[RMDB]
RNA sequence: GGGAACGACUCGAGUAGAGUCGAAAAGUUAUGCUCUCGCUGCCUAAUGGCGGUGCGGGAAACCCACUCUAAAGUCCUUAGGGUUAGCCCCCUAAGGCGGGGUUCGGAGGCACCUGGCAACAGAAGCUGAAACUGUGCACAUUCGUGUGCACAGUAAGGUACAAGCUUUGUUCGCAAAGCUUGUACCAAAAGAAACAACAACAACAAC
Reactivity to 2A3 in 0.01 (KOAc 150mM, MgCl2 10mM, bicine 150mM(pH8.5), 24C), signal-to-noise 1, nucleotides 027 to 156: g030u070u110a100u300g090c000u000c000u010c010g000c000u020g040c000c000u200a300a200u210g020g000c040g010g070u020g000c000g000g000g020a000a030a020c000c010c000a060c060u160c150u190a130a110a270g300u000c000c000u000u000a010g000g010g000u010u080a030g020c010c000c050c000c000u000a000a000g000g000c000g000g000g000g010u000u150c100g100g000a060g080g000c000a000c000c000u010g290g000c000a000a010c000a030g000a000a000g010c020u010g000a030a000a000c000u010g000u000g010c010a010c000a020u030u140c170g120u050g030u000g040c000a000c000a000g000u010a000a000